[RMDB]
RNA sequence: GGGAACGACUCGAGUAGAGUCGAAAAGAAAGCUUCGACUAGGAAAGAAAAGAAUGGUCGAAACUCGAAAACAGCUGAAAGAGGAUCGUUCGAAAAGAAUAGCUGUGAAACUUGUCGUAGCGAAAAAGGCUAUUGAAUAGUUCGCUAUUCAAUAGCCAAAAGAAACAACAACAACAAC
Reactivity to 2A3 in 0.01 (KOAc 150mM, MgCl2 10mM, bicine 150mM(pH8.5), 24C), signal-to-noise 3, nucleotides 027 to 126: g070a030a070a000g000c000u010u010c000g000a000c030u050a010g030g080a150a070a060g060a040a180a070a020g030a020a010u040g000g010u020c050g040a290a210a110c010u010c020g030a010a060a040a020c000a000g000c000u020g020a110a120a040g030a040g020g010a000u010c000g000u080u010c000g050a180a000a000a030g130a020a060u050a050g010c000u000g000u000g030a030a050a030c000u000u000g010u000c010g000u000a000g020c060g060a110a000a000a000a000
Reactivity to DMS in 0.01 (KOAc 150mM, MgCl2 10mM, bicine 150mM(pH8.5), 24C), signal-to-noise 3, nucleotides 027 to 126: g020a100a140a180g020c010u000u000c010g030a000c010u000a030g020g000a140a100a120g010a050a080a030a160g000a060a020u000g000g020u000c000g040a050a050a190c040u000c010g000a130a040a080a010c000a000g040c020u000g000a050a090a090g000a050g000g000a020u000c020g080u000u000c020g010a050a070a040a070g000a090a080u010a070g020c010u000g000u010g000a070a100a150c060u000u000g010u000c000g000u000a020g030c010g010a020a030a070a130a060